[RMDB]
RNA sequence: GGGAACGACUCGAGUAGAGUCGAAAAGCUCUAUCCUUCGGGAUAGAGCAAACGCUACGAUUGACGGUGAAGCCGGACCUGAGGUACAGCAUAGUCGGGCUAAAAGUCACAUGUUCGCAUGUGACAACCAUACAUGCUACUUCGGUAGCAUGUAUGGAAAAGAAACAACAACAACAAC
Reactivity to DMS in 0.01 (KOAc 150mM, MgCl2 10mM, bicine 150mM(pH8.5), 24C), signal-to-noise 4, nucleotides 027 to 126: g010c000u000c000u010a000u010c000c000u000u020c200g030g020g000a010u000a000g000a000g000c000a020a030a050c110g000c060u000a040c070g010a130u010u000g010a080c090g010g020u010g000a090a090g010c010c010g000g020a040c030c050u000g000a090g010g000u010a080c060a080g030c080a070u000a080g020u000c030g000g010g010c050u010a030a060a070a140g000u000c000a000c000a010u000g000u000u010c190g010c000a000u000g020u000g000a020c000a050a090
Reactivity to 2A3 in 0.01 (KOAc 150mM, MgCl2 10mM, bicine 150mM(pH8.5), 24C), signal-to-noise 5, nucleotides 027 to 126: g000c000u020c000u000a000u010c010c010u010u080c240g090g000g020a000u000a010g000a000g000c010a000a000a010c030g010c020u160a080c040g100a090u000u140g100a040c040g050g040u080g100a080a020g030c020c020g070g040a090c030c020u060g050a060g060g070u140a100c040a030g000c010a040u040a050g030u040c050g000g040g000c020u060a090a060a020a060g010u000c000a000c000a010u030g020u050u080c250g010c080a000u000g000u000g000a000c000a000a020